[RMDB]
RNA sequence: GGGAACGACUCGAGUAGAGUCGAAAAGAUAUGGAACUGUAGGGAGCUGUGUAUCGGAAACGAUACCUAGCUUUGAUCUAUUUCCUAAGUCAAAACCACAAGGUCGUCUUCGGACGACCUUGUGGAAGGUAGAGGGAAAGUUCGCUUUCCCUCUACCAAAAGAAACAACAACAACAAC
Reactivity to DMS in 0.01 (KOAc 150mM, MgCl2 10mM, bicine 150mM(pH8.5), 24C), signal-to-noise 3, nucleotides 027 to 126: g000a030u000a090u010g000g000a010a030c300u030g010u000a020g010g010g000a010g030c000u030g000u000g000u000a000u000c020g000g020a060a020a040c000g030a010u000a000c000c020u000a020g020c010u000u000u000g000a060u010c000u000a060u010u000u000c010c000u000a030a170g000u000c030a090a090a080a160c000c000a020c010a020a000g000g010u000c000g000u010c010u000u000c280g010g000a020c000g030a000c000c000u000u000g010u000g000g010a000a010
Reactivity to 2A3 in 0.01 (KOAc 150mM, MgCl2 10mM, bicine 150mM(pH8.5), 24C), signal-to-noise 2, nucleotides 027 to 126: g000a000u030a010u100g000g010a060a020c100u220g060u140a030g000g030g040a010g010c000u010g000u010g000u090a000u020c000g010g000a060a010a040c010g000a000u030a000c000c010u030a010g010c040u300u140u030g020a020u000c010u000a030u060u040u040c020c020u000a060a000g010u000c000a020a010a160a220c000c000a000c030a010a000g010g000u000c000g050u000c020u080u260c300g060g040a000c000g030a010c000c000u000u000g010u000g000g000a010a000